[RMDB]
RNA sequence: GGGAACGACUCGAGUAGAGUCGAAAAGCCGGGCCGGCCUGGGCUGCCGAAGCUCAGCAGCUCUGAAGUCCUUUGUGUAAGUCGCGCCGCCUUUUGGCGAGAGGAGCCAUACGAAAGCGGAUGGCCGUACGUAAGUUGGAUUCGUCCAACUUACGUAAAAAGAAACAACAACAACAAC
Reactivity to 2A3 in 0.01 (KOAc 150mM, MgCl2 10mM, bicine 150mM(pH8.5), 24C), signal-to-noise 7, nucleotides 027 to 126: g010c010c000g000g020g000c020c040g070g020c010c020u050g000g000g000c010u010g020c020c050g100a070a010g030c010u020c050a020g020c010a010g010c000u000c030u080g070a070a030g060u100c010c000u060u100u070g100u020g030u100a090a080g050u060c020g000c030g010c050c000g010c020c010u110u170u080u170g020g000c030g000a080g010a040g060g060a080g000c010c000a010u060a090c060g090a140a090a050g060c040g020g010a020u050g030g000c000c030g050
Reactivity to DMS in 0.01 (KOAc 150mM, MgCl2 10mM, bicine 150mM(pH8.5), 24C), signal-to-noise 8, nucleotides 027 to 126: g020c030c040g010g000g010c060c030g010g010c080c030u000g000g000g000c010u010g000c080c090g000a120a070g020c070u010c030a100g000c050a120g000c030u000c020u020g000a100a130g000u000c020c010u000u000u020g010u020g000u010a060a090g000u010c050g010c100g020c010c010g010c070c030u000u010u020u020g000g010c010g010a110g010a090g000g010a180g010c000c010a030u010a060c070g000a080a120a110g020c060g010g010a050u010g010g020c020c040g020